[RMDB]
RNA sequence: GGGAACGACUCGAGUAGAGUCGAAAAGACCAAUAACAGAAUGCACCACAGCGUAAAAUCAUGUGAUUGGGUGAGUUGGUCGCACCGCCAUUUGACGAACGAACGCCAAGCCUAAGCCGUCUUUGUGAACACGAGCUAGUCUUCGGACUAGCUCGAAGUGAACGUAUCACUUCGGUGAUACGUUCACAAAAGAAACAACAACAACAAC
Reactivity to 2A3 in 0.01 (KOAc 150mM, MgCl2 10mM, bicine 150mM(pH8.5), 24C), signal-to-noise 1, nucleotides 027 to 156: g030a000c000c000a020a030u130a020a040c040a010g170a120a030u090g030c010a030c030c000a040c010a030g020c010g060u060a130a130a000a000u150c080a050u200g070u050g040a060u050u240g090g000g040u050g010a150g020u020u020g030g000u010c000g010c030a050c040c000g040c070c010a080u130u000u080g050a000c010g030a160a040c080g000a030a020c060g030c020c000a010a010g000c020c020u030a100a000g020c020c020g040u030c000u030u090u010g070u100g070a000a000c050a000c080g000a000g000c010u000a000g000u000c000u030u060c130g140g000a000c000u000a010g000c000u000c000g000a030a010